[RMDB]
RNA sequence: GGGAACGACUCGAGUAGAGUCGAAAAACAUAAGCUGCCAUAACAAGCACAGCUACAAAAGCAAAUGAGAUAUCCACCCCUAUAGCAAUGGAUUGCUGUUUAAUUUCAGUUGCAGUUAAAUGCGAUGACCAUAACUCGGGUUCGCCCGAGUUAUGGUAAAAGAAACAACAACAACAAC
Reactivity to DMS in 0.01 (KOAc 150mM, MgCl2 10mM, bicine 150mM(pH8.5), 24C), signal-to-noise 1, nucleotides 027 to 126: a070c100a050u010a070a130g030c060u010g000c170c040a060u010a090a110c250a110a140g000c070a020c040a040g020c100u030a110c120a030a060a100a110g000c070a080a100a050u020g000a020g000a060u020a050u000c060c120a120c000c010c020c000u000a080u040a010g020c050a060a060u010g010g000a090u000u000g010c030u020g010u000u000u000a100a090u000u000u000c070a020g000u000u020g000c000a030g000u010u000a010a140a150u000g000c030g040a030u020g000
The record gives the reactivity of an RNA of 177 nucleotides to DMS. The DMS profile rests on 632 reads. The RNA was probed in 150 mM KOAc, 10 mM MgCl2 and 150 mM bicine (pH 8.5) at 24 C. Reactivities are given for positions 27 through 126. In probing experiments dimethyl sulfate is read out at A N1 and C N3, which are open when not base-paired. It was measured as part of the RMDB library OK2TRN.